[RMDB]
Description
Conditions: 150 mM KOAc, 10 mM MgCl2 and 150 mM bicine (pH 8.5), 24 C. Structure probing data (DMS and 2A3) for a 177-nucleotide construct. Values cover nucleotides 27 to 126. DMS adducts were read by reverse transcription with MarathonRT. The data come from the RNA Mapping Database (RMDB), library M2PK90.
RNA sequence: GGGAACGACUCGAGUAGAGUCGAAAAAGAGAGCGCGAAAAAGAUCGAUCGAUCGUUUGAACGCGCAAGUUUAAGUUUGAUACGGGCAUACUAGCUAGCUAGCUAGCAAAACAAACUUAAAAAAGAACUAUGAAUAACUCUUCGGAGUUAUUCAUAGAAAAGAAACAACAACAACAAC
Reactivity to DMS in 0.01 (KOAc 150mM, MgCl2 10mM, bicine 150mM(pH8.5), 24C), signal-to-noise 4, nucleotides 027 to 126: a130g010a130g010a140g030c000g030c000g000a070a080a030a050a050g010a010u000c010g010a140u010c210g000a000u000c000g000u010u000u000g000a170a100c020g000c000g010c010a060a030g010u000u000u000a010a010g000u010u000u000g020a110u000a110c210g000g020g020c160a190u010a090c010u000a010g000c020u010a180g000c160u010a070g010c010u000a020g000c040a040a060a100a130c000a000a010a010c000u000u000a000a000a050a080a060a100g000a050a120
Reactivity to 2A3 in 0.01 (KOAc 150mM, MgCl2 10mM, bicine 150mM(pH8.5), 24C), signal-to-noise 2, nucleotides 027 to 126: a010g150a020g010a020g010c030g000c000g040a020a050a000a030a000g000a010u020c030g060a100u130c170g000a020u000c040g040u060u070u090g050a100a020c000g010c000g000c020a020a010g000u000u020u020a010a000g000u000u000u040g070a080u100a150c050g030g060g010c080a040u070a190c010u000a000g000c000u000a000g120c030u020a010g010c000u010a000g040c030a040a060a020a000c000a000a000a010c010u020u000a010a050a000a000a000a020g050a070a010